[RMDB]
An RNA of 177 nucleotides, treated with DMS and 2A3 and read out base by base. The RNA was probed in 150 mM KOAc, 10 mM MgCl2 and 150 mM bicine (pH 8.5) at 24 C. 2A3 adducts were read by reverse transcription with SuperScript II with manganese.
RNA sequence: GGGAACGACUCGAGUAGAGUCGAAAAAUGGUGACCUUCGGGUCACCAUGGUGCGUAGCUGCGUUAAUUUAAUAGCUACGCUUAAUAAAUAUAAUUAACGCAAUGGAGCCUGCUUCGGCAGGCUCAAGGUUAGAACUUUAUUCGUAAAGUUCUAACCAAAAGAAACAACAACAACAAC
Reactivity to DMS in 0.01 (KOAc 150mM, MgCl2 10mM, bicine 150mM(pH8.5), 24C), signal-to-noise 2, nucleotides 027 to 126: a020u000g000g010u000g010a010c010c010u000u010c200g030g030g010u000c010a000c010c010a000u000g000g030u000g010c000g000u000a010g000c030u020g000c000g010u000u000a010a010u000u010u010a100a080u000a080g010c000u000a000c000g000c010u000u000a040a060u010a040a090a070u010a080u010a050a060u000u000a000a000c000g000c020a210a140u020g000g000a000g010c010c000u000g010c010u000u020c200g010g020c000a000g010g000c000u000c000a000a020
Reactivity to 2A3 in 0.01 (KOAc 150mM, MgCl2 10mM, bicine 150mM(pH8.5), 24C), signal-to-noise 3, nucleotides 027 to 126: a000u000g030g000u000g010a000c010c010u030u010c280g050g000g000u000c000a000c000c000a000u000g010g070u070g020c000g020u020a010g020c070u050g000c020g010u010u000a030a030u080u030u160a180a150u170a090g000c010u000a000c010g000c000u010u050a030a020u040a030a040a010u240a020u030a130a070u030u000a010a000c000g000c000a010a040u100g120g000a010g010c020c010u010g000c040u030u070c210g080g000c000a010g040g000c000u000c010a010a000